[RMDB]
RNA sequence: GGGAACGACUCGAGUAGAGUCGAAAAGAAAGAAAGGGCCGCUCUUGCCCGCUCAUUCAAUAUUGCCGGUUUGAACGAAAUUGAUCAGUUCACCGGGAGCAUUGUAUGAUCGGGCUUCAGACCCUAAUAGCUUAAGUCUUUUCGAAGACUUAAGCUAAAAAGAAACAACAACAACAAC
Reactivity to DMS in 0.01 (KOAc 150mM, MgCl2 10mM, bicine 150mM(pH8.5), 24C), signal-to-noise 3, nucleotides 027 to 126: g010a040a130a130g020a090a140a050g010g000g000c140c090g020c120u010c040u000u010g010c020c000c000g000c120u000c000a000u000u000c010a000a010u000a010u000u000g000c000c000g010g000u000u040u020g030a010a010c010g020a060a140a290u030u060g020a120u020c070a170g000u010u000c000a040c000c020g000g000g000a010g000c080a000u000u020g010u000a000u000g010a000u000c000g010g000g000c000u000u020c070a110g000a190c010c000c000u000a060a110
Reactivity to 2A3 in 0.01 (KOAc 150mM, MgCl2 10mM, bicine 150mM(pH8.5), 24C), signal-to-noise 6, nucleotides 027 to 126: g060a020a080a010g090a060a140a020g020g010g010c080c050g070c140u040c050u060u070g000c000c000c000g000c000u000c000a000u030u010c000a000a010u010a020u050u040g230c000c000g000g030u060u120u230g010a010a000c020g020a030a130a160u170u190g060a120u190c090a060g000u000u000c000a000c000c010g000g000g010a010g000c000a000u010u010g010u000a000u000g000a000u010c000g000g000g000c000u000u010c000a000g000a000c000c000c000u060a140a180